Conditions: 150 mM KOAc, 10 mM MgCl2 and 150 mM bicine (pH 8.5), 24 C. Structure probing data (2A3) for a 177-nucleotide construct.
RNA sequence: GGGAACGACUCGAGUAGAGUCGAAAACAGGCGCGACGGGAGGGAAGCAACCGGUUGCAGUCCGGCCUCCUGUACCUGGCUGGCCCGGGCUGGGGCUGCAAGCUUUCCAGCCAAACUUAUGUGAAGCGGGAGUGCUGAAAUUCGUUUCAGCACUCCCAAAAGAAACAACAACAACAAC
Reactivity to 2A3 in 0.01 (KOAc 150mM, MgCl2 10mM, bicine 150mM(pH8.5), 24C), signal-to-noise 1, nucleotides 027 to 126: c000a020g030g000c000g000c000g140a050c060g000g000g000a010g000g010g030a140a000g030c050a180a000c000c000g060g030u090u300g070c060a000g020u050c000c000g000g010c000c000u000c000c020u040g010u050a000c000c000u000g020g020c000u110g060g000c000c000c060g000g000g030c000u000g050g000g060g010c000u150g120c130a120a090g060c000u030u000u110c000c000a000g000c000c040a020a020a020c080u300u030a240u160g080u000g070a130a180g080c050